This 177-nucleotide RNA was probed chemically with DMS and 2A3.
RNA sequence: GGGAACGACUCGAGUAGAGUCGAAAACGGCCGAUUAGCCGAUGCUAUAUAAUAUCGUAUAGCGCAUGCGCAUCGCGUAGCUACGAUAUCGAUGCAUAUCGCGGCAUAUCGGCGCAUUAGCGCAUGCCGUACGCUAGCUGUUCGCAGCUAGCGUACGAAAAGAAACAACAACAACAAC
Reactivity to DMS in 0.01 (KOAc 150mM, MgCl2 10mM, bicine 150mM(pH8.5), 24C), signal-to-noise 5, nucleotides 027 to 126: c050g010g020c010c100g040a140u010u000a160g020c000c010g000a090u010g020c020u000a030u000a050u010a070a140u010a080u010c100g000u000a020u000a040g010c040g010c040a010u000g010c010g020c020a110u000c130g010c020g020u000a090g010c010u000a040c000g000a010u000a000u000c040g000a150u010g000c140a050u000a010u000c040g030c030g000g000c000a180u010a080u000c190g010g010c000g010c100a060u010u000a100g030c000g000c020a020u000g010c010
Reactivity to 2A3 in 0.01 (KOAc 150mM, MgCl2 10mM, bicine 150mM(pH8.5), 24C), signal-to-noise 6, nucleotides 027 to 126: c010g020g000c020c040g250a300u130u170a030g010c010c010g030a030u120g000c010u000a000u020a020u040a220a260u130a110u220c090g020u020a000u030a050g020c030g000c030a010u020g000c010g000c020a060u060c060g020c000g030u040a040g020c010u000a000c010g010a000u000a000u020c040g260a220u230g050c080a010u010a010u060c040g000c030g040g000c040a030u050a060u180c090g150g000c000g000c010a020u050u100a030g000c010g000c010a010u000g020c010

The reactions ran in a buffer of 150 mM KOAc, 10 mM MgCl2 and 150 mM bicine (pH 8.5), at 24 C.